[RMDB]
RNA sequence: GGGAACGACUCGAGUAGAGUCGAAAAACACAGAGGUUGUACUCACUUUGACGAUGAUUAACCAUCAUUGAGGAGAACCAAAGUAACUUUUGGGUGUUAGGUACAAGGUAAAAAAAAUCUGAGCUUGCUAUCUAACAACGUUCGCGUUGUUAGAUAGAAAAGAAACAACAACAACAAC
Reactivity to DMS in 0.01 (KOAc 150mM, MgCl2 10mM, bicine 150mM(pH8.5), 24C), signal-to-noise 4, nucleotides 027 to 126: a060c090a120c030a050g010a180g000g020u010u000g020u000a110c020u000c050a080c090u000u000u000g020a120c210g010a030u010g010a020u000u010a070a110c300c100a180u000c020a040u000u000g000a300g030g010a100g010a080a080c030c010a020a060a050g000u010a080a100c200u010u000u000u000g000g010g000u010g010u000u000a040g000g000u000a040c030a040a040g000g020u010a010a000a000a060a060a040a130a100u010c080u000g000a110g010c060u000u010g010
Reactivity to 2A3 in 0.01 (KOAc 150mM, MgCl2 10mM, bicine 150mM(pH8.5), 24C), signal-to-noise 3, nucleotides 027 to 126: a000c070a010c000a030g050a030g060g020u040u040g050u040a020c020u040c080a060c070u090u060u080g120a110c050g010a020u020g000a020u070u090a070a040c050c020a000u010c020a020u020u050g020a030g030g030a060g000a050a020c000c000a000a010a000g020u010a010a110c040u020u050u060u060g020g010g040u080g020u120u100a030g000g010u040a020c020a020a030g120g060u300a150a060a010a030a010a020a010a020u060c060u040g020a010g080c040u000u050g000